Source: RMDB library OK1LIB, as collected in RNAgym. An RNA of 177 nucleotides, treated with DMS and 2A3 and read out base by base.

[RMDB]
RNA sequence: GGGAACGACUCGAGUAGAGUCGAAAAGGGCCGCGGCACACCGAUCUGGUCUAGCACCGCGCCCCGGAUGGCAGGCAUGUUGGAAUACAACCAUGGCUGCACUGCCGGCACCGGAGAAGCUCCUGCGAUAUUCGUAUCUCUUCGGAGAUACGAAUAUAAAAGAAACAACAACAACAAC
Reactivity to DMS in 0.01 (KOAc 150mM, MgCl2 10mM, bicine 150mM(pH8.5), 24C), signal-to-noise 7, nucleotides 027 to 126: g010g000g010c100c030g010c030g000g000c120a120c270a040c030c020g010a140u010c110u060g010g010u010c090u010a110g000c110a180c020c020g000c030g010c120c030c010c000g010g000a130u020g000g020c000a010g000g000c030a020u000g010u020u000g000g010a150a100u080a150c100a030a050c110c080a030u010g000g020c020u000g020c010a070c050u020g000c020c020g000g020c070a110c070c010g000g010a060g000a080a200g000c050u010c020c010u000g000c090g010
Reactivity to 2A3 in 0.01 (KOAc 150mM, MgCl2 10mM, bicine 150mM(pH8.5), 24C), signal-to-noise 7, nucleotides 027 to 126: g050g010g000c140c020g000c020g010g000c060a040c010a020c080c020g060a180u110c120u180g010g010u030c070u080a020g010c040a010c060c000g000c010g000c020c010c010c000g040g010a050u090g060g000c010a000g010g030c020a020u040g030u040u030g080g080a210a100u230a250c040a040a010c050c040a010u040g120g000c010u010g010c010a100c070u050g070c010c000g010g000c020a040c020c010g000g030a080g020a040a030g030c030u040c020c010u050g040c040g040
Values cover nucleotides 27 to 126. The RNA was probed in 150 mM KOAc, 10 mM MgCl2 and 150 mM bicine (pH 8.5) at 24 C. DMS adducts were read by reverse transcription with MarathonRT. The 2A3 profile rests on 10,543 reads.